Source: RMDB library OK2TRN, as collected in RNAgym. Structure probing data (2A3 and DMS) for a 177-nucleotide construct. For DMS, 3,046 sequencing reads were counted. For DMS the reverse transcriptase was MarathonRT. Values cover nucleotides 27 to 126. The reactions ran in a buffer of 150 mM KOAc, 10 mM MgCl2 and 150 mM bicine (pH 8.5), at 24 C. The 2A3 profile rests on 1,424 reads.
[RMDB]
RNA sequence: GGGAACGACUCGAGUAGAGUCGAAAAGGCACUCCGAAGUGUUUGAACUGAGCUGGACCUGAUAGCACAGAAACCUGAGAAGCCAUUUUGGGGUCAGAGAAAGUUCUACUUAGUGCAGGACACUUGGCACUGCAGAGAAGUUCGCUUCUCUGCAGUGAAAAGAAACAACAACAACAAC
Reactivity to 2A3 in 0.01 (KOAc 150mM, MgCl2 10mM, bicine 150mM(pH8.5), 24C), signal-to-noise 1, nucleotides 027 to 126: g080g000c040a000c090u010c030c030g150a040a030g000u000g030u070u020u110g030a020a010c020u010g000a000g040c070u070g020g000a010c000c000u020g010a050u050a060g150c060a020c010a150g070a120a090a040c020c000u080g000a050g020a120a000g070c040c020a060u090u000u040u050g060g010g020g000u040c000a000g040a000g070a180a100a050g020u090u050c010u010a040c000u050u030a010g020u020g070c070a040g070g040a000c010a000c000u050u040g030g000
Reactivity to DMS in 0.01 (KOAc 150mM, MgCl2 10mM, bicine 150mM(pH8.5), 24C), signal-to-noise 3, nucleotides 027 to 126: g010g000c040a120c070u000c060c040g020a070a040g010u000g000u000u000u010g020a120a040c030u010g010a060g000c030u000g020g000a050c050c010u010g000a040u020a090g020c060a130c100a090g010a050a060a110c100c020u000g020a080g000a090a100g000c040c050a160u000u020u000u000g020g010g010g010u010c030a030g000a070g000a110a070a150g000u010u010c010u000a130c030u000u000a050g000u000g000c060a100g020g010a070c040a030c030u010u000g000g000